Source: RMDB library M2RFPK, as collected in RNAgym. Chemical mapping of a 207-nucleotide RNA with 2A3. For 2A3 the reverse transcriptase was SuperScript II with manganese. For 2A3, 2,510 sequencing reads were counted. As a SHAPE reagent, 2A3 marks flexible, mostly unpaired nucleotides at the ribose 2'-OH. Reactivities are given for positions 27 through 156. Values are in units of 0.01, from 0 to 300, in steps of 10.
RNA sequence: GGGAACGACUCGAGUAGAGUCGAAAAGCAAGCUAGCCGGCAAAACAGCAAACUUGACCACCAAGGAUAAAAGAGAUCUUAUCCAAGGAUGCAAAAGAUAAUCUCACUUUUGACACCCACUGAUCUCAAAACGUGCGGUUCUUCGGAACCGCACGAAGUUAAUCAUGCACUUCGGUGCAUGAUUAACAAAAGAAACAACAACAACAAC
Reactivity to 2A3 in 0.01 (KOAc 150mM, MgCl2 10mM, bicine 150mM(pH8.5), 24C), signal-to-noise 3, nucleotides 027 to 156: g030c020a020a020g000c000u040a010g010c010c020g120g020c080a030a050a090a110c030a010g010c020a020a030a060c010u020u070g060a070c030c020a020c030c020a120a020g020g000a030u040a030a050a040a010g030a000g000a010u000c010u050u040a010u030c030c020a010a060g020g000a040u060g010c000a020a030a020a010g020a050u160a190a140u140c070u040c110a050c020u040u020u020u020g070a100c010a050c020c010c000a080c130u100g000a010u000c000u010c010a030a050a010a020c010g000u010g000c010g010g000u000u000c000u020u030c100g110g000a000a000c000c000g000c000a000c000g010a000a000